[RMDB]
RNA sequence: GGGAACGACUCGAGUAGAGUCGAAAAUGCAGGGCAAAUUCGGUAGAUCGAUCAACGGAUUGUUUAUCGUGCGUGGUAGGUGUGAUGGUGAAGUUCUAAAUAGCUUGAGCAAACAAACAGAAUCAAAAAAGAACUUCCUGUUCGCAGGAAGUUCUUUAAAAGAAACAACAACAACAAC
Reactivity to DMS in 0.01 (KOAc 150mM, MgCl2 10mM, bicine 150mM(pH8.5), 24C), signal-to-noise 2, nucleotides 027 to 126: u010g020c030a030g000g000g050c030a040a150a110u010u010c040g010g030u020a020g030a130u020c110g000a120u010c030a150a030c110g020g000a130u030u060g010u000u000u010a010u020c040g030u010g000c040g040u020g000g000u000a070g030g020u020g000u000g000a040u060g010g010u000g080a030a050g000u000u000c070u000a040a060a150u010a160g010c060u010u030g010a090g000c100a110a070a080c200a080a080a070c250a130g000a060a090u040c080a010a020a090
Reactivity to 2A3 in 0.01 (KOAc 150mM, MgCl2 10mM, bicine 150mM(pH8.5), 24C), signal-to-noise 2, nucleotides 027 to 126: u110g050c030a030g000g070g080c110a000a000a070u200u060c020g010g050u140a040g040a110u130c050g000a000u000c010a050a070c070g030g080a300u130u170g060u060u080u000a070u120c000g070u060g070c000g000u010g120g000u010a010g020g050u050g010u040g060a000u000g000g050u000g110a040a000g060u100u070c020u130a000a070a120u210a000g050c000u000u000g010a040g030c000a030a010a010c010a000a060a010c000a060g020a110a000u150c070a040a010a130